[RMDB]
RNA sequence: GGGAACGACUCGAGUAGAGUCGAAAAUAUUGGAUUGUCAGAUAGUAACUAUCAUAGUAGCCACGUCACCGAUUAUAGGGGAGAAAACUAUGAAAACGAGGCAAUCAUGCAGAGACGCUGCUCAGCCUCUGCAUACUAACUUCGGUUAGUAUGCAGAAAAAGAAACAACAACAACAAC
Reactivity to 2A3 in 0.01 (KOAc 150mM, MgCl2 10mM, bicine 150mM(pH8.5), 24C), signal-to-noise 9, nucleotides 027 to 126: u270a070u050u180g130g000a000u010u010g010u010c030a030g080a210u110a090g150u070a150a080c070u050a070u090c000a000u010a020g040u020a040g090c070c040a120c070g110u100c060a120c130c010g010a030u080u140a140u300a290g010g050g020g000a060g050a040a090a010a000c010u000a000u010g000a030a060a000a040c070g010a050g010g010c000a000a010u010c030a020u130g030c020a020g050a010g010a110c080g040c040u010g000c010u010c040a020g020c010c010
Reactivity to DMS in 0.01 (KOAc 150mM, MgCl2 10mM, bicine 150mM(pH8.5), 24C), signal-to-noise 7, nucleotides 027 to 126: u030a070u020u010g020g010a020u000u010g010u000c010a060g020a120u030a110g020u030a090a100c200u020a130u000c000a020u010a020g010u000a060g010c170c160a100c140g000u020c030a110c030c010g000a210u040u030a140u050a120g020g010g010g000a080g000a050a080a090a020c010u000a000u010g000a010a050a090a070c120g000a100g000g010c020a020a010u000c010a030u020g000c060a030g010a260g000a060c040g020c000u010g000c010u010c030a090g000c050c020